[RMDB]
RNA sequence: GGGAACGACUCGAGUAGAGUCGAAAACAACCCUACCGCAUGUACCGAACUUGAUAAAAGUGCGGUAGGGGUAAAUUCAAUGUAUUCGGUACAUGCGCAACAAAACAAAACAAAACAAACAAACAAACACGUACGAUCUGUUCGCAGAUCGUACGUGAAAAGAAACAACAACAACAAC
Reactivity to 2A3 in 0.01 (KOAc 150mM, MgCl2 10mM, bicine 150mM(pH8.5), 24C), signal-to-noise 1, nucleotides 027 to 126: c010a000a000c010c000c000u010a000c000c000g010c000a000u030g000u000a000c000c010g000a050a010c000u000u030g040a040u200a240a180a000a090g000u070g070c050g050g000u000a000g000g000g000g020u010a000a000a000u280u000c040a100a000u090g000u000a160u000u000c000g000g000u000a000c000a000u050g040c110g000c010a000a220c000a000a100a030a030c090a000a220a000a010c090a010a170a200a010c010a080a100a000c100a000a270a000c000a000a060a000